[RMDB]
RNA sequence: GGGAACGACUCGAGUAGAGUCGAAAACAUCGAUGAGCAGGCAUGGCCUGUGCCUGUGCCGCUCUGAGCCUUCCUAGGUGUGGCCUGGCACAUAAUGAGGCAGAUGCAUUCCCAGGCAGGUAGCAGCCAACGAUUGGCAUUUCGAUGCCAAUCGUUGAAAAGAAACAACAACAACAAC
Reactivity to 2A3 in 0.01 (KOAc 150mM, MgCl2 10mM, bicine 150mM(pH8.5), 24C), signal-to-noise 1, nucleotides 027 to 126: c030a050u060c020g120a090u080g010a030g000c200a160g060g000c020a010u020g070g000c010c100u140g030u110g080c000c010u070g010u090g010c000c000g010c000u040c030u020g010a000g030c000c000u080u080c020c030u050a070g000g090u000g010u010g070g000c000c050u010g020g020c040a000c000a030u200a100a110u210g020a030g010g000c030a010g000a040u040g020c020a070u040u030c030c000c000a010g080g070c020a020g000g010u040a040g000c080a030g050c030
Reactivity to DMS in 0.01 (KOAc 150mM, MgCl2 10mM, bicine 150mM(pH8.5), 24C), signal-to-noise 3, nucleotides 027 to 126: c070a060u000c030g010a160u000g010a070g030c010a060g030g000c010a060u000g010g000c020c140u020g000u010g010c030c020u010g020u010g020c020c010g000c000u000c010u000g020a150g010c030c040u010u010c240c080u000a130g020g020u010g010u000g020g020c000c000u000g010g000c010a030c020a060u010a060a100u020g000a030g020g020c010a070g000a040u000g010c030a160u000u000c040c000c010a150g010g050c020a040g000g010u000a110g030c120a090g010c120